Background: Structure probing data (DMS and 2A3) for a 177-nucleotide construct. Conditions: 150 mM KOAc, 10 mM MgCl2 and 150 mM bicine (pH 8.5), 24 C. Values are in units of 0.01, from 0 to 300, in steps of 10. The data come from the RNA Mapping Database (RMDB), library TTRDES.
RNA sequence: GGGAACGACUCGAGUAGAGUCGAAAAGAUAUGGACCGCGUGUGACGCGAAGAACUAGGUCGGAAACGACCUAGGGAGCGUACACCGGUCCUAAGUCAAAAUCUGUAUCCGUUCGCGGAUACAGAAACUGUUCAGAUCAGUUCGCUGAUCUGAACAGAAAAGAAACAACAACAACAAC
Reactivity to DMS in 0.01 (KOAc 150mM, MgCl2 10mM, bicine 150mM(pH8.5), 24C), signal-to-noise 2, nucleotides 027 to 126: g000a030u020a300u010g040g010a010c020c000g010c240g010u010g010u000g020a020c080g000c020g000a120a120g000a210a220c010u000a000g010g010u000c000g010g000a070a010a150c000g000a000c010c000u000a000g030g030g000a040g010c000g020u000a020c000a000c000c000g020g020u000c000c000u000a000a040g000u000c040a120a130a160a170u000c000u000g010u000a010u000c000c000g000u000u010c260g010c000g000g000a000u010a000c000a010g000a020a050a100
Reactivity to 2A3 in 0.01 (KOAc 150mM, MgCl2 10mM, bicine 150mM(pH8.5), 24C), signal-to-noise 2, nucleotides 027 to 126: g030a020u050a040u150g040g000a010c010c030g060c270g040u030g020u110g220a110c070g100c040g270a300a020g010a000a010c000u010a000g030g000u000c000g010g010a030a080a030c010g000a000c000c000u000a000g010g020g000a000g030c000g020u040a000c010a000c000c000g020g030u030c000c000u010a000a000g000u010c020a000a000a030a300u000c000u000g000u000a010u000c020c000g000u040u010c300g000c010g100g000a000u000a000c000a010g000a010a000a000